[RMDB]
RNA sequence: GGGAACGACUCGAGUAGAGUCGAAAAAGCGUUGAUACGUCAUCGCAACGAUUGCCUGAUCGUAAAACAGGAGACGGCCGUGGCCGCGACCACGUAAAAAAGCGUAACGUGGUCUACGGACCACGAAAAAAGCGCGGAACGUUCGCGUUCCGCGCAAUCGAUAAAUGACGUUCGCGUCAUUUAUCGAAAAAGAAACAACAACAACAAC
Reactivity to 2A3 in 0.01 (KOAc 150mM, MgCl2 10mM, bicine 150mM(pH8.5), 24C), signal-to-noise 2, nucleotides 027 to 156: a000g020c000g000u010u000g020a030u040a160c200g040u020c020a010u040c020g020c020a040a070c020g000a020u000u060g010c000c000u000g030a010u020c040g110u170a000a030a030a060c010a010g050g010a020g070a040c140g120g010c030c000g000u000g000g000c010c010g000c000g020a010c000c010a010c020g050u080a000a010a020a020a020a020g100c040g050u060a070a010c010g000u000g000g010u000c000u030a060c190g040g020a100c000c000a000c000g040a010a000a000a000a000a020g000c020g010c020g000g000a010a010c000g010u080u110c140g000c010g120u000u030c010c000g000c000g000c000a000a000
Record summary: Structure probing data (2A3) for a 207-nucleotide construct. For 2A3 the reverse transcriptase was SuperScript II with manganese. It was measured as part of the RMDB library M2RFPK. The reactions ran in a buffer of 150 mM KOAc, 10 mM MgCl2 and 150 mM bicine (pH 8.5), at 24 C.